[RMDB]
This 207-nucleotide RNA was probed chemically with 2A3 and DMS. The reactions ran in a buffer of 150 mM KOAc, 10 mM MgCl2 and 150 mM bicine (pH 8.5), at 24 C.
RNA sequence: GGGAACGACUCGAGUAGAGUCGAAAAAUCAAGAUAUCACCCAAAGCAACAGUCUUGCACCUCGGAGCAGCAACAGGCCCAGAACACGACCACAUCCCAGUCGGAGGUGUCGUGCUCAACCACUUCUUCCAGAACAGCGACGUCUACCACCACGACGACUAACACACAAAUUCGUUUGUGUGUUAGUAAAAGAAACAACAACAACAAC
Reactivity to 2A3 in 0.01 (KOAc 150mM, MgCl2 10mM, bicine 150mM(pH8.5), 24C), signal-to-noise 7, nucleotides 027 to 156: a010u100c040a040a010g060a080u100a050u140c050a100c020c020c000a060a070a020g050c030a020a070c010a050g040u020c020u080u070g010c030a060c020c020u040c060g050g030a040g010c020a010g020c010a050a040c020a090g060g000c020c020c010a010g030a040a010c020a000c030g010a010c030c040a020c030a120u030c020c010c010a090g200u210c090g020g030a020g020g010u030g000u010c010g000u010g000c010u030c020a020a060c020c010a040c010u050u040c000u090u010c030c010a030g010a130a080c020a050g040c020g060a030c030g070u010c010u060a060c000c040a030c020c010a040c060g050a010c010g000
Reactivity to DMS in 0.01 (KOAc 150mM, MgCl2 10mM, bicine 150mM(pH8.5), 24C), signal-to-noise 3, nucleotides 027 to 156: a120u000c020a090a070g030a300u000a080u000c040a150c030c010c020a100a140a120g020c030a050a070c050a070g010u000c040u000u010g010c060a070c040c020u010c060g040g010a100g020c040a090g000c050a060a050c090a080g030g010c020c010c020a160g020a030a030c030a030c010g010a030c040c050a020c030a100u010c010c010c010a210g010u010c120g010g030a090g010g030u000g020u000c010g020u010g000c010u000c010a080a130c040c020a080c040u010u000c020u000u000c020c030a130g010a050a070c070a090g030c000g010a040c030g020u000c020u000a050c030c010a040c040c020a070c040g010a100c030g020

DMS adducts were read by reverse transcription with MarathonRT.
For 2A3 the reverse transcriptase was SuperScript II with manganese.
The 2A3 profile rests on 9,078 reads.